This 177-nucleotide RNA was probed chemically with DMS and 2A3. For 2A3, 1,076 sequencing reads were counted.
RNA sequence: GGGAACGACUCGAGUAGAGUCGAAAAUACGUGGCCGUAUAUGGCGAGUGCGACACGACGUGACCGAAACGAGGGCGUCGAGUUCGUCCACGAAGACGACGGGAGUAUUACCGCCGUCGACCUCGAGCGGUGCAAUUCACUUCGGUGAAUUGCACCGAAAAGAAACAACAACAACAAC
Reactivity to DMS in 0.01 (KOAc 150mM, MgCl2 10mM, bicine 150mM(pH8.5), 24C), signal-to-noise 1, nucleotides 027 to 126: u000a030c010g040u000g030g020c000c000g010u000a150u010a160u010g000g010c040g030a020g070u010g000c030g150a020c020a270c010g000a040c000g060u010g000a220c020c000g000a040a090a190c280g010a230g000g030g000c020g000u010c040g000a040g060u010u000c040g000u010c000c000a090c110g000a080a100g040a000c000g000a040c000g000g000g030a180g000u000a080u000u000a150c020c000g010c010c000g010u000c000g000a030c040c020u000c040g030a260g020
Reactivity to 2A3 in 0.01 (KOAc 150mM, MgCl2 10mM, bicine 150mM(pH8.5), 24C), signal-to-noise 2, nucleotides 027 to 126: u200a020c070g000u030g040g040c000c000g180u220a200u080a110u280g020g040c060g030a060g000u140g020c020g000a010c020a000c100g020a000c000g010u070g190a080c030c020g140a110a230a000c170g040a190g030g060g000c000g030u000c000g000a000g050u060u080c000g020u000c020c000a010c020g060a100a000g010a010c000g000a010c000g000g000g010a130g140u120a290u200u240a080c010c040g000c000c000g040u000c000g000a070c000c000u030c000g010a060g000